RNA sequence: GGGAACGACUCGAGUAGAGUCGAAAAUCCUACGGGAAUCCCCCGGUCCCUCUCACGUCCAGCCCCUCCCCGUGUCUAGUGAAGGGAGACUCCGGGACUCCUUGCAUGCUGGGGACGAAGCCGCCCCUUAGGCGAUCCUUCGGGAUCGCCAAAAGAAACAACAACAACAAC
Reactivity to 2A3 in 0.01 (KOAc 150mM, MgCl2 10mM, bicine 150mM(pH8.5), 24C), signal-to-noise 2, nucleotides 027 to 129: u020c000c000u020a090c040g070g000g020a020a070u070c000c010c000c010c000g000g000u000c000c010c000u000c000u000c000a040c060g110u010c010c010a030g040c040c000c000c000u020c010c000c060c040g070u100g070u150c090u070a030g040u000g110a050a040g000g030g000a000g050a020c150u080c050c040g000g000g000a010c000u010c000c000u000u070g040c000a040u220g000c020u020g030g000g000g050a050c070g040a110a000g000c070c000g050c010c020c010c000u010u030a000
Reactivity to DMS in 0.01 (KOAc 150mM, MgCl2 10mM, bicine 150mM(pH8.5), 24C), signal-to-noise 3, nucleotides 027 to 129: u040c000c030u050a100c110g000g000g000a020a270u070c040c060c030c050c140g010g060u060c000c000c010u010c040u080c060a100c010g020u010c060c080a130g000c070c000c020c030u030c000c000c020c050g010u020g030u000c110u010a130g010u010g060a100a010g030g020g040a000g000a190c040u040c140c150g000g150g030a130c060u040c000c000u010u010g000c150a070u000g060c030u050g000g000g000g000a040c120g000a070a190g000c090c040g020c000c020c050c100u040u040a060